An RNA of 177 nucleotides, treated with DMS and 2A3 and read out base by base.
For 2A3, 7,868 sequencing reads were counted.
Conditions: 150 mM KOAc, 10 mM MgCl2 and 150 mM bicine (pH 8.5), 24 C.
For 2A3 the reverse transcriptase was SuperScript II with manganese.
The DMS profile rests on 9,004 reads.
[RMDB]
RNA sequence: GGGAACGACUCGAGUAGAGUCGAAAAGACAAUAGCGUAGGGAACCAAGCAAAGAGGUAAGAAAUCCCACGGUAGAAGGCUUGGUUCAAGCCGUGGGAAGAAGAAGUCCCACUCCCUACGCCGAUAAUGUGUAUUAUCAGUUCGCUGAUAAUACACAAAAAGAAACAACAACAACAAC
Reactivity to DMS in 0.01 (KOAc 150mM, MgCl2 10mM, bicine 150mM(pH8.5), 24C), signal-to-noise 7, nucleotides 027 to 126: g010a150c140a090a090u010a070g010c010g000u000a010g000g000g010a020a080c010c010a020a030g020c030a130a110a160g010a090g020g010u010a070a100g010a090a120a080u000c000c000c000a030c030g000g000u000a060g010a040a030g010g010c020u000u000g000g010u010u010c200a050a080g010c010c010g010u000g000g000g010a020a050g000a070a070g000a090a100g010u010c000c000c020a300c040u000c000c000c000u000a010c020g020c000c060g000a040u000a070a090
Reactivity to 2A3 in 0.01 (KOAc 150mM, MgCl2 10mM, bicine 150mM(pH8.5), 24C), signal-to-noise 4, nucleotides 027 to 126: g100a020c040a050a150u070a150g000c000g010u000a000g000g010g000a010a020c010c010a020a000g000c010a020a090a120g190a130g060g010u150a140a070g070a130a100a010u010c000c000c000a010c000g000g020u060a080g040a210a000g050g000c000u010u010g020g020u020u070c030a030a010g000c010c000g000u000g000g050g010a000a010g040a010a000g030a010a000g030u010c000c000c000a000c000u000c000c000c000u000a000c000g000c000c000g020a030u140a220a090